[RMDB]
RNA sequence: GGGAACGACUCGAGUAGAGUCGAAAACUAAAUCGUUUCAUUAAAUAAAUUACCUUGUAUUGGCGAUUAAAUUAAGGUAAAUUAUAAAAAAUGCUGAUAUUUUUGACUAAACCAAAUGCUAACCCAGCUUUGGUUCGAAUUUCGAUUCGAACCAAAGAAAAGAAACAACAACAACAAC
Reactivity to 2A3 in 0.01 (KOAc 150mM, MgCl2 10mM, bicine 150mM(pH8.5), 24C), signal-to-noise 1, nucleotides 027 to 126: c050u050a000a130a120u080c000g040u000u110u060c030a010u050u100a110a060a190u050a000a000a000u030u040a010c010c000u030u030g130u130a010u020u030g080g000c060g030a030u090u160a100a010a040u080u010a030a030g000g000u010a020a100a000u020u080a020u040a000a100a000a000a000a000u040g000c020u080g050a010u050a120u090u070u080u090u050g060a040c040u070a160a100a050c010c010a000a210a000u010g000c000u050a040a030c000c000c000a020g020

Structure probing data (2A3) for a 177-nucleotide construct. Reactivities are given for positions 27 through 126.